[RMDB]
An RNA of 177 nucleotides, treated with DMS and read out base by base.
RNA sequence: GGGAACGACUCGAGUAGAGUCGAAAACUUGCGAAAGCAAAGGUUAACCUAGUAGUACCUGCUGUGCCUUCGUUGGCAAAUGAAGGAAAAUCACACAGAUGGUGGCAUUUGCCUGGGAGUUGGGUGCCCGAGUGCAGGAGUUCGCUCCUGCACUCGGAAAAGAAACAACAACAACAAC
Reactivity to DMS in 0.01 (KOAc 150mM, MgCl2 10mM, bicine 150mM(pH8.5), 24C), signal-to-noise 1, nucleotides 027 to 126: c050u000u000g000c000g050a210a180a260g000c090a010a000a130g000g010u020u000a120a140c000c120u000a120g000u000a070g010u030a010c060c020u000g000c000u050g020u060g000c000c000u090u000c110g110u030u030g060g120c290a000a000a050u000g000a050a040g000g020a190a080a020a080u060c180a300c010a070c060a000g060a210u000g000g020u000g000g000c010a090u000u000u070g000c000c000u010g070g020g000a080g000u000u000g000g000g060u000g000c020